Chemical mapping of a 177-nucleotide RNA with 2A3 and DMS.
The DMS profile rests on 1,717 reads.

[RMDB]
RNA sequence: GGGAACGACUCGAGUAGAGUCGAAAAUCACGGCAUUAUCGCCAGCGGUGCUGCCGUGAUGCGGUCUUCGCAAGGACCGCAACAUGAAGGUACGAUGCUUUUGUGUCGUGCUUCUUGUUUCUGGCACGCAAGUAGUAGAGUUCGCUCUACUACUUGCAAAAGAAACAACAACAACAAC
Reactivity to 2A3 in 0.01 (KOAc 150mM, MgCl2 10mM, bicine 150mM(pH8.5), 24C), signal-to-noise 3, nucleotides 027 to 126: u010c000a000c000g000g000c010a000u030u020a000u070c010g030c090c100a030g120c040g030g050u030g000c020u010g000c000c000g010u010g000a010u030g000c000g000g000u000c010u130u100c120g060c190a090a100g030g000a000c000c010g010c000a000a010c030a080u110g090a070a010g040g000u020a000c000g020a020u030g030c030u090u240u260u300g040u000g010u020c000g020u000g020c000u020u000c030u020u030g000u000u000u000c020u030g020g030c120a010c140
Reactivity to DMS in 0.01 (KOAc 150mM, MgCl2 10mM, bicine 150mM(pH8.5), 24C), signal-to-noise 2, nucleotides 027 to 126: u000c000a000c020g000g010c000a020u000u000a020u000c060g030c110c240a160g040c030g030g000u000g010c160u000g000c010c000g000u010g000a000u010g030c020g000g010u000c010u010u010c300g020c300a170a150g000g010a010c000c000g020c000a060a030c150a040u000g010a100a030g000g010u010a040c010g000a010u000g000c010u000u010u010u010g030u000g010u010c000g020u000g000c000u000u010c070u000u000g010u000u000u000c030u000g000g020c150a220c210

The RNA was probed in 150 mM KOAc, 10 mM MgCl2 and 150 mM bicine (pH 8.5) at 24 C.